[RMDB]
RNA sequence: GGGAACGACUCGAGUAGAGUCGAAAAUGUAUCCUACAAGUCUAGUACAACGUAUAAACUGACUGUAGGUGACAUCUUCGUACUUACCUCUCACUCUGUGGCUACCUUGACGGCGCCCACAAUUGUGCUCUAUCCUUAACUUCGGUUAAGGAUAGAGAAAAGAAACAACAACAACAAC
Reactivity to DMS in 0.01 (KOAc 150mM, MgCl2 10mM, bicine 150mM(pH8.5), 24C), signal-to-noise 4, nucleotides 027 to 126: u000g010u000a110u000c000c000u000a000c010a050a110g000u000c010u000a050g030u000a090c190a130a120c280g010u010a140u010a060a070a070c070u000g000a030c010u000g010u000a000g000g010u000g000a080c020a010u000c030u000u000c040g000u010a050c050u000u000a100c150c020u000c040u010c060a050c070u010c050u000g020u000g000g010c050u000a030c040c010u000u010g030a090c120g010g010c150g030c210c010c010a060c120a050a070u010u010g020u010g010
Reactivity to 2A3 in 0.01 (KOAc 150mM, MgCl2 10mM, bicine 150mM(pH8.5), 24C), signal-to-noise 7, nucleotides 027 to 126: u000g000u000a030u050c010c000u000a010c020a150a080g010u010c020u300a010g030u050a060c060a210a060c240g150u170a070u110a260a150a040c020u010g000a000c000u000g000u000a000g000g000u010g030a010c000a000u000c020u030u020c010g030u060a030c020u050u070a050c010c010u000c010u020c030a050c030u060c040u070g040u040g050g000c010u030a070c030c000u020u060g070a040c040g010g030c050g020c030c050c010a020c020a020a130u120u090g070u070g060
An RNA of 177 nucleotides, treated with DMS and 2A3 and read out base by base. For DMS the reverse transcriptase was MarathonRT. It was measured as part of the RMDB library 15KREP. The 2A3 profile rests on 9,101 reads. For 2A3 the reverse transcriptase was SuperScript II with manganese. Conditions: 150 mM KOAc, 10 mM MgCl2 and 150 mM bicine (pH 8.5), 24 C.